[RMDB]
RNA sequence: GGGAACGACUCGAGUAGAGUCGAAAAGCGUUAGCUAGUGAUAUUUUUGACACUCCUAGCGUACUUCAAGCUACUCUUUCUGAGUUUUCACACUUAGCUACCUUUGCUGAGUUGGAAGCUGCGCAGAUAACAUAACCCUUCGGGGUUAUGAAAAGAAACAACAACAACAAC
Reactivity to DMS in 0.01 (KOAc 150mM, MgCl2 10mM, bicine 150mM(pH8.5), 24C), signal-to-noise 9, nucleotides 027 to 129: g000c000g020u020u020a040g010c080u020a040g000u020g050a110u040a020u050u060u070u070u110g000a100c090a040c050u000c300c010u000a040g020c010g040u030a030c090u040u030c090a110a110g040c000u000a020c000u020c020u020u020u020c000u000g010a010g020u020u000u020u010c030a000c180a000c030u000u000a030g020c030u020a010c220c140u070u050u050g000c000u030g000a000g000u000u000g000g000a000a000g030c030u030g040c160g030c110a040g020a050u030a060a200
Reactivity to 2A3 in 0.01 (KOAc 150mM, MgCl2 10mM, bicine 150mM(pH8.5), 24C), signal-to-noise 9, nucleotides 027 to 129: g010c010g010u020u010a000g010c110u030a010g020u020g090a120u070a260u230u240u110u150u280g080a020c000a000c000u000c000c000u000a000g000c000g010u040a060c030u050u130c060a040a040g040c020u020a030c000u010c000u020u080u010c020u030g010a010g010u010u000u020u000c050a100c010a000c060u030u010a000g000c010u110a170c060c130u240u220u130g000c000u010g000a000g000u000u000g000g000a000a000g000c020u040g040c110g000c040a010g010a050u060a090a000
An RNA of 170 nucleotides, treated with DMS and 2A3 and read out base by base. For DMS the reverse transcriptase was MarathonRT. 2A3 adducts were read by reverse transcription with SuperScript II with manganese. Conditions: 150 mM KOAc, 10 mM MgCl2 and 150 mM bicine (pH 8.5), 24 C. It was measured as part of the RMDB library 15KLIB. Values cover nucleotides 27 to 129.